[RMDB]
RNA sequence: GGGAACGACUCGAGUAGAGUCGAAAACUUCUACUUAUUUAAGGUCAAACCACAAUUUGACUUCUAACUGUGGCAGUUAAUUUCAUUUUGUGAAAAUACACCUUUGUGGGCAAACAUGGUGCAAGCCAAAGAGAACAUGCAUGUGGGCCAUAAUUGACGAUUAGCGCUGAUUCGUCAGCGCUAAUCGAAAAGAAACAACAACAACAAC
Reactivity to 2A3 in 0.01 (KOAc 150mM, MgCl2 10mM, bicine 150mM(pH8.5), 24C), signal-to-noise 1, nucleotides 027 to 156: c020u070u140c060u160a100c020u120u180a140u170u230u070a070a000g000g000u050c010a020a000a010c020c010a020c070a070a000u000u000u020g000a000c000u000u000c080u050a010a000c020u020g010u170g300g070c070a000g020u010u020a010a030u000u030u010c050a030u010u120u000u000g030u020g000a160a190a000a080u070a020c060a020c010c000u100u050u100g050u060g050g050g040c040a070a150a000c000a020u020g010g010u000g120c060a000a020g000c020c050a060a100a020g040a000g010a050a030c040a120u120g050c020a000u030g030u000g000g000g020c000c000a050u060a110a080u180u040g030a010

Annotation
This 207-nucleotide RNA was probed chemically with 2A3. For 2A3, 402 sequencing reads were counted. The RNA was probed in 150 mM KOAc, 10 mM MgCl2 and 150 mM bicine (pH 8.5) at 24 C. 2A3 is a SHAPE reagent: it acylates the 2'-hydroxyl of flexible nucleotides of all four kinds.